[RMDB]
RNA sequence: GGGAACGACUCGAGUAGAGUCGAAAAUCACCGACGCGCCGAUCGCGGUGGCCGGGGCACGAAAUAGGCUGUUCGCCUUUGAUAUUCGGCGAAACCGGGGCGACCCUUCAGGUAUCUCUCAGUCAGCCCGCGGUGAGAAAUUCGUUUCUCACCGCGGAAAAGAAACAACAACAACAAC
Reactivity to 2A3 in 0.01 (KOAc 150mM, MgCl2 10mM, bicine 150mM(pH8.5), 24C), signal-to-noise 2, nucleotides 027 to 126: u070c010a030c040c010g010a020c060g010c020g000c000c060g060a140u110c040g000c000g110g000u010g020g000c010c010g060g000g000g000c110a060c100g180a010a100a030u090a070g080g000c050u050g140u180u150c150g000c020c000u010u030u030g080a100u040a160u100u090c010g000g000c000g040a020a020a000c010c020g040g000g000g000c010g040a030c000c000c000u080u040c000a030g120g000u070a140u020c010u010c010u010c020a060g120u030c000a010g080c030